[RMDB]
RNA sequence: GGGAACGACUCGAGUAGAGUCGAAAACGUGAUCGAGGUCGACGCGCGCGACGACGUUCUGCACCGUAUCGUCGCCGUCGUCGUACACGCUGACGCGCUCGCGGCGCAGGUAUGCGAGGCCGGUGCAAUCCGAUUUACCCUUCGGGGUAAAUCGGAUAAAAGAAACAACAACAACAAC
Reactivity to 2A3 in 0.01 (KOAc 150mM, MgCl2 10mM, bicine 150mM(pH8.5), 24C), signal-to-noise 1, nucleotides 027 to 126: c000g020u020g050a130u070c100g030a050g000g060u020c010g020a010c030g010c000g000c020g020c000g010a040c000g020a010c000g040u100u140c100u130g000c090a070c020c040g030u120a040u070c020g010u010c010g010c010c020g060u050c000g050u010c010g000u010a000c040a000c000g030c020u050g030a030c030g020c000g030c000u000c070g070c010g020g010c000g010c070a060g070g000u160a020u100g050c060g000a030g060g030c030c000g000g000u010g000c010a010
Reactivity to DMS in 0.01 (KOAc 150mM, MgCl2 10mM, bicine 150mM(pH8.5), 24C), signal-to-noise 1, nucleotides 027 to 126: c030g010u000g010a080u000c030g000a150g000g010u000c010g000a040c000g050c070g000c240g010c000g040a010c010g000a010c040g000u030u000c100u000g050c070a100c200c030g040u000a110u000c020g010u000c000g030c000c010g000u000c030g020u000c020g000u010a080c000a100c050g070c030u000g000a060c090g010c000g000c050u000c100g010c050g050g000c020g000c080a040g010g020u010a040u000g000c030g010a100g010g000c050c020g000g010u000g020c020a100